[RMDB]
RNA sequence: GGGAACGACUCGAGUAGAGUCGAAAAGAAUUGGUAUGUAAGCUACUUCUUCCAGUAGCUGCGUCAUAACAUCAAGGUUAUGCAUACUGAGCCGAAGCUCAGCUUCGGUCUUCCAAGGAAGACCAAAUACAGCUCAGCCCGUUCGCGGGCUGAGCAAUCAGAGUUCAUUGUUCGCAAUGAACUCUGAAAAAGAAACAACAACAACAAC
Reactivity to DMS in 0.01 (KOAc 150mM, MgCl2 10mM, bicine 150mM(pH8.5), 24C), signal-to-noise 1, nucleotides 027 to 156: g010a130a130u010u030g020g020u000a000u000g040u000a300a300g030c010u000a030c000u000u000c040u010u020c060c050a300g050u000a000g020c000u000g030c000g060u000c000a020u020a010a010c000a300u010c260a190a140g040g000u010u010a000u000g020c000a060u010a010c010u000g000a180g060c050c060g000a030a060g010c000u020c120a140g000c000u000u000c030g000g010u000c020u010u000c000c000a090a110g060g030a040a000g000a250c020c000a030a040a090u000a050c180a200g040c010u030c000a060g050c040c020c010g000u020u000c230g020c090g000g010g020c020u000g000a020g000c030a020a010
Reactivity to 2A3 in 0.01 (KOAc 150mM, MgCl2 10mM, bicine 150mM(pH8.5), 24C), signal-to-noise 2, nucleotides 027 to 156: g060a010a110u030u010g000g000u000a000u000g000u000a030a000g010c000u010a010c000u090u090c000u000u000c000c000a000g000u000a010g010c010u000g000c000g000u010c010a000u000a000a000c020a060u240c140a100a040g300g000u000u000a000u010g000c010a000u000a000c010u000g000a000g010c000c000g020a000a000g000c020u040c300a040g000c010u000u000c000g010g000u000c040u080u060c030c020a020a020g000g000a000a000g000a000c010c080a010a040a040u200a100c120a030g000c000u000c000a000g010c000c030c000g050u040u050c090g010c010g100g000g030c020u000g000a000g000c010a000a000
Structure probing data (DMS and 2A3) for a 207-nucleotide construct. For DMS the reverse transcriptase was MarathonRT. For DMS, 1,795 sequencing reads were counted. For 2A3, 1,531 sequencing reads were counted. The RNA was probed in 150 mM KOAc, 10 mM MgCl2 and 150 mM bicine (pH 8.5) at 24 C.